The record gives the reactivity of an RNA of 177 nucleotides to DMS. Conditions: 150 mM KOAc, 10 mM MgCl2 and 150 mM bicine (pH 8.5), 24 C. It was measured as part of the RMDB library TTRDES.

RNA sequence: GGGAACGACUCGAGUAGAGUCGAAAAGAUAUGGAUGUUGACAGGGAGCUGCUCACCUCGGAAACGAGGUGACAGCGAGGAUCUGUCACGGCAUCCUAAGUCAAAUCUUGCAGUUCGCUGCAAGAAACUAGACCAUCCUGUUCGCAGGAUGGUCUAGAAAAGAAACAACAACAACAAC
Reactivity to DMS in 0.01 (KOAc 150mM, MgCl2 10mM, bicine 150mM(pH8.5), 24C), signal-to-noise 1, nucleotides 027 to 126: g010a030u000a100u010g000g000a000u020g010u000u000g020a030c000a010g000g000g000a010g030c000u000g000c240u000c000a000c000c010u000c000g000g000a020a040a090c000g030a030g020g010u000g000a000c010a010g000c000g010a020g050g000a020u010c020u010g000u000c000a040c300g060g030c130a050u010c000c010u000a010a190g000u000c000a120a130a140u010c000u000u000g000c010a010g000u000u010c300g000c000u000g000c010a010a000g020a050a010a200